[RMDB]
RNA sequence: GGGAACGACUCGAGUAGAGUCGAAAACGAUCAGUACGUUCGCGUACUGAUCGAAGCUACUGGAGACAGUAGCAAGUCUAAGACCUUGUUAGGGGGAAACAAGGAAAAAUGGAGGAAGGCCGGACCUCCAUACUUAGACAACCCCCAACCGGCCAAACUAAUACGUCGAUUUCGAUCGACGUAUUAGAAAAGAAACAACAACAACAAC
Reactivity to DMS in 0.01 (KOAc 150mM, MgCl2 10mM, bicine 150mM(pH8.5), 24C), signal-to-noise 1, nucleotides 027 to 156: c000g000a020u000c000a000g000u020a000c000g000u000u000c300g090c050g030u000a000c010u000g000a000u000c000g000a020a130g040c030u000a020c000u000g030g000a300g020a300c000a010g040u000a020g040c010a050a030g000u000c020u010a020a070g010a300c020c000u000u000g020u000u000a120g000g000g000g000g030a300a070a040c030a060a040g040g010a010a050a050a210a190u030g010g000a030g010g000a020a040g020g000c030c000g030g000a300c000c000u000c000c010a020u010a020c090u010u000a010g010a000c000a070a190c090c000c020c010c100a070a070c010c000g050g050c000c020a080a090a100
Reactivity to 2A3 in 0.01 (KOAc 150mM, MgCl2 10mM, bicine 150mM(pH8.5), 24C), signal-to-noise 4, nucleotides 027 to 156: c010g000a000u010c000a000g020u000a000c000g020u030u100c270g000c000g080u000a000c000u000g000a000u000c000g000a010a010g000c000u000a000c000u000g000g030a040g030a040c000a010g000u000a000g000c000a000a010g000u000c000u000a000a030g010a190c000c010u020u030g040u050u160a300g000g000g000g000g070a030a010a000c000a000a010g000g000a060a080a080a060a020u040g000g000a010g020g040a080a260g010g000c010c020g060g000a240c010c000u000c000c000a000u010a010c000u000u000a000g000a010c000a020a120c040c020c000c010c050a010a010c000c000g000g000c000c000a010a000a010